[RMDB]
RNA sequence: GGGAACGACUCGAGUAGAGUCGAAAAGUAUGGAUGCCACCGUGACGGCUCAAUUACACAAGUGCCAACGAUAACGAGGCGCUCGCUAUUGCUGCGUAACUGACGGCCUGACGGUCUGACGUUACAAAAAACGAAAAGUGGUUCGCCACUUUUCGAACAUUAUGGAGAAGUUCGCUUCUCCAUAAUGAAAAGAAACAACAACAACAAC
Reactivity to 2A3 in 0.01 (KOAc 150mM, MgCl2 10mM, bicine 150mM(pH8.5), 24C), signal-to-noise 6, nucleotides 027 to 156: g080u080a070u170g020g050a070u090g040c030c020a040c040c040g060u060g070a080c100g010g000c010u030c090a050a070u150u110a060c110a010c050a110a030g030u020g020c020c000a140a030c120g100a140u090a200a040c040g020a060g070g020c040g040c050u040c020g030c030u070a070u170u250g050c080u080g020c040g020u000a010a010c020u020g030a010c020g020g020c000c020u170g120a060c110g010g020u000c020u010g020a010c010g020u000u020a010c010a010a040a000a010a000a000c000g010a010a000a000a000g000u000g030g020u040u020c100g050c050c000a000c000u000u000u000u010c000g000a030a010
Reactivity to DMS in 0.01 (KOAc 150mM, MgCl2 10mM, bicine 150mM(pH8.5), 24C), signal-to-noise 3, nucleotides 027 to 156: g020u030a070u010g000g030a100u010g010c010c010a110c040c050g000u010g010a120c080g030g030c020u010c020a060a090u010u000a060c050a070c040a070a100g070u000g030c070c010a060a090c050g010a090u010a070a090c030g010a200g020g050c040g070c050u000c000g020c010u000a050u010u010g020c000u000g020c020g030u020a010a020c010u000g000a300c300g010g000c000c000u020g020a110c180g060g000u000c000u010g030a300c250g000u000u000a070c060a000a010a060a030a050a110c020g010a000a020a030a010g030u000g040g010u000u010c300g010c030c000a030c010u000u000u010u000c020g010a030a080

Record summary
The record gives the reactivity of an RNA of 207 nucleotides to 2A3 and DMS. 2A3 adducts were read by reverse transcription with SuperScript II with manganese. Reactivities are given for positions 27 through 156. For 2A3, 4,483 sequencing reads were counted. The reactions ran in a buffer of 150 mM KOAc, 10 mM MgCl2 and 150 mM bicine (pH 8.5), at 24 C.